[RMDB]
RNA sequence: GGGAACGACUCGAGUAGAGUCGAAAAGUUCGCAUGGUGCACUAUAGUGUUAUUAGUAACUAAGUAAGCUUACAAUCGAAAAUGUUUAACCAUAAAAGGGUAAAAUGGUGUAAGACAGUCUGAUACUUUACGGCUUCACGUUUCGACGUGAAGCCAAACAUUCUCUUAGUUUCGACUAAGAGAAUGUAAAAGAAACAACAACAACAAC
Reactivity to 2A3 in 0.01 (KOAc 150mM, MgCl2 10mM, bicine 150mM(pH8.5), 24C), signal-to-noise 2, nucleotides 027 to 156: g010u020u050c030g020c140a080u140g030g060u100g000c030a010c030u080a110u090a220g030u040g000u090u020a030u060u040a050g100u040a000a050c050u010a030a060g130u030a090a010g100c020u090u110a070c070a100a110u070c040g110a070a060a030a030u060g020u050u060u030a000a030c000c020a000u060a100a140a010a000g070g000g020u080a060a060a070a070u070g000g000u030g000u030a060a000g050a030c030a020g000u040c000u040g050a050u030a190c020u040u080u040a060c080g000g000c010u030u000c000a000c000g020u030u070u130c220g040a020c030g010u000g000a000a000g000c000c000a000a000
Reactivity to DMS in 0.01 (KOAc 150mM, MgCl2 10mM, bicine 150mM(pH8.5), 24C), signal-to-noise 2, nucleotides 027 to 156: g020u000u000c050g070c050a150u010g020g010u010g010c000a060c050u000a120u010a130g030u000g000u010u020a040u000u010a060g020u010a060a110c040u000a090a110g020u000a060a110g030c050u000u010a040c040a080a110u000c050g020a090a050a120a110u000g010u000u000u000a070a080c040c020a060u020a080a100a170a150g000g000g000u000a020a050a080a050u000g030g000u000g010u000a030a080g020a070c050a070g000u000c050u000g000a170u010a040c030u000u000u000a120c150g030g000c020u010u000c010a000c010g030u000u010u000c270g020a060c010g000u000g000a050a010g020c000c000a010a010